[RMDB]
RNA sequence: GGGAACGACUCGAGUAGAGUCGAAAACGCAUGAACUCGUCGCUGAUCUUCGCGCCCUGGUAGACUCGCUGUCGAGGCUCGUGAAAUGAACCGAAAGACAUGCAUACGCCGACUCGCGACCGAUGUGCGUAUAGGGAAAAUUCGUUUUCCCUAUACGAAAAGAAACAACAACAACAAC
Reactivity to DMS in 0.01 (KOAc 150mM, MgCl2 10mM, bicine 150mM(pH8.5), 24C), signal-to-noise 9, nucleotides 027 to 126: c110g010c070a060u010g010a080a080c070u000c050g010u000c050g020c050u010g000a090u000c060u000u000c060g020c080g010c210c030c020u000g010g000u010a080g010a080c180u000c120g010c060u000g010u000c010g010a150g010g010c040u000c020g020u000g010a070a090a100u010g010a060a060c060c010g000a070a090a120g000a070c040a030u000g010c030a100u000a080c090g000c050c010g000a060c070u000c030g010c050g000a120c050c030g000a070u010g020u000g010
Reactivity to 2A3 in 0.01 (KOAc 150mM, MgCl2 10mM, bicine 150mM(pH8.5), 24C), signal-to-noise 9, nucleotides 027 to 126: c040g010c030a050u070g050a070a050c020u020c050g040u020c020g040c080u070g040a110u030c030u050u060c060g010c010g020c040c010c010u020g060g020u040a050g020a090c020u020c110g050c050u060g020u060c010g040a050g010g010c020u020c040g040u050g050a070a050a080u140g000a030a030c020c020g040a100a060a000g040a010c010a030u120g000c010a040u070a090c060g020c030c000g030a030c010u010c030g020c020g040a040c020c020g060a070u130g050u090g140
The record gives the reactivity of an RNA of 177 nucleotides to DMS and 2A3. The DMS profile rests on 57,249 reads. Conditions: 150 mM KOAc, 10 mM MgCl2 and 150 mM bicine (pH 8.5), 24 C. DMS adducts were read by reverse transcription with MarathonRT.